[RMDB]
RNA sequence: GGGAACGACUCGAGUAGAGUCGAAAACCAACCGCCUUCGGGCGGUUGGGAUGUCAGUCGCGAGGAAAGUCCGGGCUGACUGUCCACGACAGAACCCGGCUUAAAUCUAUCGCUUCGGCGAUAGAAAUUCCGGAAUGUAAUUCGUUACAUUCCGGAAAAAAGAAACAACAACAACAAC
Reactivity to DMS in 0.01 (KOAc 150mM, MgCl2 10mM, bicine 150mM(pH8.5), 24C), signal-to-noise 2, nucleotides 027 to 126: c010c000a000a010c000c010g000c010c010u010u030c210g020g030g030c000g000g010u000u000g010g000g040a050u010g010u010c040a070g000u000c040g020c080g010a120g010g020a100a050a030g020u010c020c000g010g010g010c090u010g010a030c010u000g000u010c010c130a100c140g000a010c040a040g010a130a140c010c000c000g010g000c030u010u000a020a160a150u000c000u000a000u000c000g010c000u000u010c180g000g030c010g020a020u000a010g000a020a090a110